[RMDB]
RNA sequence: GGGAACGACUCGAGUAGAGUCGAAAAGCAACUCAUGCUGUGUUCGGUUCGUGAGUGCAGAUUUGCAAAGGCAACACAUGAAGACCGAAUGGCACAGAUACAAUCUUAAGAGAAGAGUAUCGGGACUACCGCUGAUUUCUUCCGAUGUGUUUGCUGACUUUGUUCAGGAUUUCGAUCCUGAACAAAGAAAAGAAACAACAACAACAAC
Reactivity to DMS in 0.01 (KOAc 150mM, MgCl2 10mM, bicine 150mM(pH8.5), 24C), signal-to-noise 1, nucleotides 027 to 156: g020c040a040a070c070u010c020a060u000g000c020u000g030u010g030u030u000c020g030g050u000u000c080g000u000g000a280g030u000g000c100a120g000a170u000u000u010g040c020a090a130a180g060g010c020a020a020c010a030c020a030u000g020a270a080g060a040c070c030g000a040a080u000g090g030c020a040c080a070g000a120u000a050c050a120a110u000c080u000u000a110a150g000a080g010a040a000g000a100g000u000a020u000c010g010g010g000a190c040u000a080c080c020g000c050u020g020a050u000u000u000c000u000u000c000c050g020a060u000g010u010g020u000u010u000g000c020u030g000a210
Reactivity to 2A3 in 0.01 (KOAc 150mM, MgCl2 10mM, bicine 150mM(pH8.5), 24C), signal-to-noise 6, nucleotides 027 to 156: g030c000a010a090c020u030c070a040u150g000c000u010g010u010g040u100u060c030g020g000u120u030c050g020u050g080a160g010u010g010c050a040g050a280u120u140u210g100c080a080a140a040g140g000c020a060a030c030a020c000a030u090g050a080a020g150a060c100c000g010a020a040u050g090g000c010a000c000a030g010a010u100a140c090a050a130u070c070u170u180a150a010g090a020g010a080a000g010a010g040u020a020u030c000g010g010g080a110c110u190a190c070c080g060c090u060g020a030u040u040u030c000u030u010c020c020g090a090u060g010u010g010u030u040u110g040c000u020g020a040